[RMDB]
RNA sequence: GGGAACGACUCGAGUAGAGUCGAAAAUUGAUAUCUGCUAAAACCCGGUGCAUUCAUCAAUGCAGGUUAAGCCAAAGGGAUGUCCCGACCGGAGGCCGCCAAUCCAGGGAACCGGAUGUCAUCACGUAAAACCGUCAGUUCUUCGGAACUGACGGAACAUCUUUACAAACUUCGGUUUGUAAAGAUGAAAAGAAACAACAACAACAAC
Reactivity to 2A3 in 0.01 (KOAc 150mM, MgCl2 10mM, bicine 150mM(pH8.5), 24C), signal-to-noise 4, nucleotides 027 to 156: u040u000g000a010u000a010u010c020u020g000c100u120a060a060a100a160c000c010c010g000g030u000g000c000a010u010u160c060a100u130c100a170a020u030g010c010a020g040g000u130u200a050a020g000c000c000a020a010a000g020g000g010a050u060g040u030c010c000c030g030a010c000c000g010g000a010g020g000c000c000g010c010c010a060a140u050c000c040a080g000g000g040a020a030c030c000g030g010a010u000g000u000c020a040u050c050a030c110g120u130a010a040a070a190c000c000g000u000c000a000g000u010u010c000u020u110c170g100g000a000a000c000u000g000a000c000g000g000a000a000
Reactivity to DMS in 0.01 (KOAc 150mM, MgCl2 10mM, bicine 150mM(pH8.5), 24C), signal-to-noise 1, nucleotides 027 to 156: u000u000g000a110u000a040u010c000u010g000c010u000a130a110a070a190c020c000c000g000g030u050g000c060a040u000u000c070a080u020c060a080a150u000g020c000a120g000g030u000u000a140a050g000c040c050a020a300a290g020g000g010a070u000g010u000c010c000c000g010a100c010c010g010g020a300g020g000c010c020g030c000c010a050a080u000c020c000a060g000g070g000a130a040c150c020g000g000a080u000g010u010c000a080u000c130a060c040g060u020a030a050a110a100c000c010g060u000c010a020g010u000u000c000u000u000c300g050g000a010a020c020u000g010a000c030g010g000a000a000

This 207-nucleotide RNA was probed chemically with 2A3 and DMS. The reactions ran in a buffer of 150 mM KOAc, 10 mM MgCl2 and 150 mM bicine (pH 8.5), at 24 C. 2A3 adducts were read by reverse transcription with SuperScript II with manganese. The DMS profile rests on 2,268 reads. As a SHAPE reagent, 2A3 marks flexible, mostly unpaired nucleotides at the ribose 2'-OH.